Chemical mapping of a 207-nucleotide RNA with 2A3 and DMS. For 2A3, 674 sequencing reads were counted. For DMS the reverse transcriptase was MarathonRT. The RNA was probed in 150 mM KOAc, 10 mM MgCl2 and 150 mM bicine (pH 8.5) at 24 C. For 2A3 the reverse transcriptase was SuperScript II with manganese. Reactivities are given for positions 27 through 156. It was measured as part of the RMDB library OK3TST.
[RMDB]
RNA sequence: GGGAACGACUCGAGUAGAGUCGAAAAAAUUGCUUCAUACCCUAGCCCUUGACUUGCUUUCUCUUUCUGAAGAUGUUGCUCUGAUUAUAGUAUGGGGGCCUAUAACGUAGGGCCGGGAUAGAAGAUCUCUUGGCCAACUAGAAACAGACAGGCACAAAGGUACUAUUUACUUCGGUAAAUAGUACCUAAAAGAAACAACAACAACAAC
Reactivity to 2A3 in 0.01 (KOAc 150mM, MgCl2 10mM, bicine 150mM(pH8.5), 24C), signal-to-noise 2, nucleotides 027 to 156: a000a000u180u140g040c010u050u100c040a050u120a150c000c000c000u000a040g000c020c000c020u080u050g070a080c030u050u110g020c000u030u180u040c070u000c000u000u100u020c090u190g090a030a010g020a050u060g070u140u060g000c000u000c020u090g040a070u010u050a050u010a120g030u030a110u230g000g000g010g000g040c000c000u040a030u040a090a000c090g070u060a020g000g010g000c010c030g020g010g010a020u070a040g150a150a010g010a040u050c000u000c000u050u140g020g010c000c000a020a070c040u000a050g080a100a180a000c040a000g120a000c070a010g070g020c120a030c070a090a060
Reactivity to DMS in 0.01 (KOAc 150mM, MgCl2 10mM, bicine 150mM(pH8.5), 24C), signal-to-noise 2, nucleotides 027 to 156: a070a060u000u010g000c010u000u000c010a160u010a070c020c010c010u110a080g010c000c000c010u010u000g020a060c100u000u010g020c030u010u000u000c030u000c060u000u000u010c080u030g020a130a120g000a110u010g030u020u000g020c020u000c050u010g010a120u000u010a060u010a070g010u020a070u010g030g030g020g030g030c300c020u010a020u010a080a020c140g010u000a080g070g010g020c000c030g010g000g000a050u010a040g010a150a120g010a100u000c020u000c030u010u000g030g060c030c010a030a070c040u000a050g020a140a070a040c060a110g010a070c020a120g140g010c060a100c090a020a130